Structure probing data (2A3 and DMS) for a 207-nucleotide construct. For 2A3 the reverse transcriptase was SuperScript II with manganese. High DMS reactivity at an A or C suggests that its Watson-Crick edge is free. For DMS the reverse transcriptase was MarathonRT. The RNA was probed in 150 mM KOAc, 10 mM MgCl2 and 150 mM bicine (pH 8.5) at 24 C.

[RMDB]
RNA sequence: GGGAACGACUCGAGUAGAGUCGAAAACGGUACAUCUUGCCAGAUAAGUUAUCAUUUGGAUCGCGCAACUGAACAUUACAGCAACGGCAUACACGCGCCGCAACGUCAUUUUUUGCGCCACAACCUUUUACAAUAACUUUCUUUGUGCGGUCAUCAACUCUCUAUUGGAAUUCGUUCCAAUAGAGAGAAAAGAAACAACAACAACAAC
Reactivity to 2A3 in 0.01 (KOAc 150mM, MgCl2 10mM, bicine 150mM(pH8.5), 24C), signal-to-noise 9, nucleotides 027 to 156: c040g020g060u120a040c030a130u060c070u100u180g020c020c010a030g010a100u120a080a040g030u040u040a060u110c090a110u070u070u160g060g000a030u070c040g000c000g000c020a010a030c080u110g040a060a020c040a120u070u120a040c030a070g040c070a100a030c010g020g000c010a030u150a140c130a030c110g140c050g000c030c020g010c040a060a030c040g050u030c030a060u010u030u020u050u090u080g010c010g020c000c030a060c030a050a140c030c010u070u110u110u160a060c060a050a050u040a040a030c000u060u080u040c010u060u090u050g040u090g040c030g010g060u040c020a040u060c010a040a110
Reactivity to DMS in 0.01 (KOAc 150mM, MgCl2 10mM, bicine 150mM(pH8.5), 24C), signal-to-noise 4, nucleotides 027 to 156: c040g020g030u000a070c070a080u000c060u000u010g020c020c030a110g010a080u000a020a030g010u010u000a040u000c040a120u000u000u000g010g010a070u010c090g000c010g030c020a040a090c140u010g010a040a070c050a150u000u010a050c050a070g020c030a070a040c040g010g010c070a210u000a140c160a090c090g010c090g010c020c020g010c010a030a090c050g010u000c060a080u010u000u000u000u000u000g030c040g020c020c040a070c070a080a130c040c030u000u000u010u010a070c070a030a030u000a030a020c020u000u000u000c030u000u000u000g030u000g010c020g020g000u000c030a080u010c060a050a140